[RMDB]
RNA sequence: GGGAACGACUCGAGUAGAGUCGAAAACGAGGAACAAAAAGACCAGAACACUCCAUAUUAUUUCGUGGGCCAGAAAAGGGGAAUCUCUUACCAUCGAAAAAAGGCUGAUGGUCGAGUAUUCACAAGAGGAAGAUGUUUUUCCAUGCUCUUUUGUUCCUGUAAUCAUCCCAUUCGUGGGAUGAUUACAAAAAGAAACAACAACAACAAC
Reactivity to 2A3 in 0.01 (KOAc 150mM, MgCl2 10mM, bicine 150mM(pH8.5), 24C), signal-to-noise 3, nucleotides 027 to 156: c040g020a040g010g020a000a020c020a020a070a020a020a010g010a020c000c050a010g030a080a010c030a010c020u000c010c010a060u090a090u300u150a100u070u270u100c040g000u090g010g050g020c030c050a090g140a080a120a030a060g090g030g010g010a020a040u010c010u010c010u030u080a050c000c020a010u030c010g120a140a120a130a050a030a000g140g000c140u150g010a010u050g000g000u010c000g010a010g030u100a080u040u080c020a020c040a070a070g040a050g160g030a020a010g060a130u080g060u040u080u020u050u020c090c060a080u100g000c020u030c010u040u020u000u010g000u000u010c000c000
Reactivity to DMS in 0.01 (KOAc 150mM, MgCl2 10mM, bicine 150mM(pH8.5), 24C), signal-to-noise 1, nucleotides 027 to 156: c180g010a140g040g020a050a060c030a030a080a040a000a090g000a080c090c040a130g000a050a060c020a050c020u020c000c050a130u000a100u010u020a160u010u000u010c040g050u010g020g030g040c060c060a170g000a010a020a010a100g000g010g020g080a080a120u000c000u000c040u010u000a150c000c010a050u010c040g000a010a060a060a180a140a300g020g040c070u010g010a090u010g010g050u000c250g030a040g000u000a050u000u010c030a130c100a040a060g000a130g010g040a010a010g000a090u000g010u000u000u000u000u000c020c000a160u000g000c030u000c080u000u000u000u000g000u000u000c010c020
An RNA of 207 nucleotides, treated with 2A3 and DMS and read out base by base. Conditions: 150 mM KOAc, 10 mM MgCl2 and 150 mM bicine (pH 8.5), 24 C. For 2A3 the reverse transcriptase was SuperScript II with manganese. The data come from the RNA Mapping Database (RMDB), library OK3TST.